The record gives the reactivity of an RNA of 177 nucleotides to DMS and 2A3. DMS adducts were read by reverse transcription with MarathonRT. Reactivities are given for positions 27 through 126.

[RMDB]
RNA sequence: GGGAACGACUCGAGUAGAGUCGAAAACUGGGCGUCAUGUGCAGCAAUAUUGAAAUUGGCAGUUAUGCCUAUCGUUACCUGUGUAACACUUCCAGCCGUACCGAUCUUAACUAUCUACAAGGCGUGGUCGCUGCAUAGCUUUCGAGCUAUGCAGCGAAAAAGAAACAACAACAACAAC
Reactivity to DMS in 0.01 (KOAc 150mM, MgCl2 10mM, bicine 150mM(pH8.5), 24C), signal-to-noise 2, nucleotides 027 to 126: c080u000g010g020g010c040g040u010c040a080u000g010u000g040c050a000g000c040a110a040u030a080u020u000g020a040a060a120u000u010g000g020c020a070g010u010u010a100u000g000c000c020u000a070u000c080g020u000u000a110c080c050u000g040u010g030u010a040a050c150a090c090u000u010c030c020a060g000c040c070g000u000a050c100c060g010a060u020c080u000u030a100a060c100u010a050u000c050u000a040c030a020a080g000g030c080g100u000g000g010
Reactivity to 2A3 in 0.01 (KOAc 150mM, MgCl2 10mM, bicine 150mM(pH8.5), 24C), signal-to-noise 1, nucleotides 027 to 126: c020u000g010g000g050c010g000u080c000a030u130g040u020g000c020a000g000c020a050a040u070a070u180u200g060a070a080a040u040u010g040g000c000a020g060u120u110a110u120g000c000c000u000a090u080c020g020u000u000a040c020c020u020g060u060g000u100a050a050c000a000c060u100u000c080c020a070g000c010c050g010u000a010c000c000g040a020u000c000u070u000a020a090c030u030a080u110c010u080a020c040a040a030g110g000c010g170u050g030g010